About this RNA: This 177-nucleotide RNA was probed chemically with 2A3 and DMS. For DMS the reverse transcriptase was MarathonRT. For DMS, 11,185 sequencing reads were counted. Conditions: 150 mM KOAc, 10 mM MgCl2 and 150 mM bicine (pH 8.5), 24 C. Values cover nucleotides 27 to 126. 2A3 adducts were read by reverse transcription with SuperScript II with manganese.

RNA sequence: GGGAACGACUCGAGUAGAGUCGAAAAGGAGCUCGACCACGUCAAACUCGGCACCGCUUUCCACGCGGUCCAGCACGGCCUCCACGUCGGCGGCCCAGCGCUCGUGGCUACUGCGGGCGCGCUGGGCAGUAGGUGUCCAAUUCGUUGGACACCUACUAAAAGAAACAACAACAACAAC
Reactivity to 2A3 in 0.01 (KOAc 150mM, MgCl2 10mM, bicine 150mM(pH8.5), 24C), signal-to-noise 8, nucleotides 027 to 126: g070g010a040g020c030u040c050g050a040c020c010a040c050g080u060c080a070a060a100c050u030c070g020g010c080a020c020c010g010c040u080u070u050c030c010a050c080g040c020g020g010u020c020c000a020g010c050a020c050g030g000c010c000u040c030c010a050c040g160u100c040g020g040c020g040g000c000c000c000a010g000c000g000c000u010c000g020u040g070g010c120u210a130c060u200g010c010g000g010g020c010g000c020g000c050u020g000g000g000c000
Reactivity to DMS in 0.01 (KOAc 150mM, MgCl2 10mM, bicine 150mM(pH8.5), 24C), signal-to-noise 4, nucleotides 027 to 126: g020g010a090g020c030u010c030g010a060c060c030a080c090g000u010c080a050a090a100c050u010c090g010g000c070a030c020c020g000c020u010u010u020c070c070a090c200g000c060g000g000u000c030c020a080g010c070a090c060g000g000c050c020u020c020c020a050c100g010u020c090g000g020c060g000g010c000c010c090a060g020c010g000c000u000c010g010u000g010g000c090u010a040c060u000g000c000g010g000g010c010g020c050g050c040u000g000g010g020c040